[RMDB]
RNA sequence: GGGAACGACUCGAGUAGAGUCGAAAAUACAGGCAUGCAAUGUGAAAUAAGCACAUCAUGGAGAAUGGGUUAUCCAUCCCCUCAAGCAUUUAUCCGUUGAGUUGCAAACACUCUUUAAGUUAUUUUAGAGUUAACUUACUAUUGAGUAUAGUCACCCAAAGACUACUAGAUUCGUCUAGUAGUCUUUAAAAGAAACAACAACAACAAC
Reactivity to DMS in 0.01 (KOAc 150mM, MgCl2 10mM, bicine 150mM(pH8.5), 24C), signal-to-noise 4, nucleotides 027 to 156: u040a060c050a100g030g010c090a050u010g030c020a060a030u000g010u010g010a060a130a160u010a100a180g020c040a050c040a050u000c040a120u010g010g010a100g010a060a050u000g010g030g010u010u010a130u000c020c010a060u000c000c010c010c010u000c040a060a210g000c010a050u000u010u010a100u010c040c020g000u010u010g000a300g000u000u000g030c030a100a090a080c080a030c010u000c010u000u000u000a020a060g010u000u010a050u020u000u000u020a210g000a170g010u010u010a030a020c010u000u000a040c110u000a100u010u010g010a050g000u000a070u000a090g010u000c050a110c030c020c020
Reactivity to 2A3 in 0.01 (KOAc 150mM, MgCl2 10mM, bicine 150mM(pH8.5), 24C), signal-to-noise 4, nucleotides 027 to 156: u100a000c040a010g080g000c010a000u020g000c000a000a130u040g030u020g070a060a060a130u300a110a040g110c040a040c050a070u300c030a030u110g010g040a050g030a080a080u070g000g040g040u140u130a080u110c050c000a020u050c000c000c010c020u050c030a020a100g030c030a060u070u150u140a100u120c060c030g030u020u060g040a030g020u020u030g000c010a020a080a000c010a030c020u010c000u000u050u040a030a020g010u030u030a080u020u140u060u170a070g020a010g060u070u020a010a010c000u010u040a020c010u020a070u100u130g000a010g020u030a070u060a100g030u050c040a060c000c000c000